[RMDB]
RNA sequence: GGGAACGACUCGAGUAGAGUCGAAAACAGUUUAUGGGAUGCAACUAAAUGAUGUGACUAACAGACUCAACCCGAGGUCUGCGGUCUGGUAUGGGGUAAGCAUGAGUAAUGUCAUACGAGUGAGCAGGAUACCCCAGAAGUUCGCUUCUGGGGUAUCAAAAGAAACAACAACAACAAC
Reactivity to DMS in 0.01 (KOAc 150mM, MgCl2 10mM, bicine 150mM(pH8.5), 24C), signal-to-noise 2, nucleotides 027 to 126: c080a050g010u010u000u000a110u000g000g000g010a150u010g010c080a080a080c090u010a060a070a070u010g010a080u010g020u010g010a060c010u000a110a140c030a070g000a030c010u000c050a080a130c040c030c060g010a110g000g020u010c030u010g010c090g010g010u010c030u000g010g020u000a040u000g000g000g000g000u010a030a060g000c050a020u000g000a090g010u000a100a070u000g010u000c070a050u010a120c070g000a080g020u000g000a100g010c050a150g020
Reactivity to 2A3 in 0.01 (KOAc 150mM, MgCl2 10mM, bicine 150mM(pH8.5), 24C), signal-to-noise 1, nucleotides 027 to 126: c010a010g010u010u100u040a160u130g020g000g100a020u080g100c090a020a030c030u110a020a120a220u170g050a030u140g030u010g040a010c010u030a130a010c000a020g040a030c010u000c070a030a060c060c000c040g010a030g040g040u100c080u030g000c030g040g060u010c050u070g090g020u040a090u080g030g000g000g010u040a100a060g030c020a010u030g020a000g000u040a100a030u090g010u080c030a010u000a130c060g000a020g060u040g000a010g070c010a000g010

An RNA of 177 nucleotides, treated with DMS and 2A3 and read out base by base. The reactions ran in a buffer of 150 mM KOAc, 10 mM MgCl2 and 150 mM bicine (pH 8.5), at 24 C. For DMS, 1,675 sequencing reads were counted. High 2A3 reactivity points to a flexible backbone, as in loops and unpaired stretches. Reactivities are given for positions 27 through 126. For DMS the reverse transcriptase was MarathonRT. The 2A3 profile rests on 775 reads.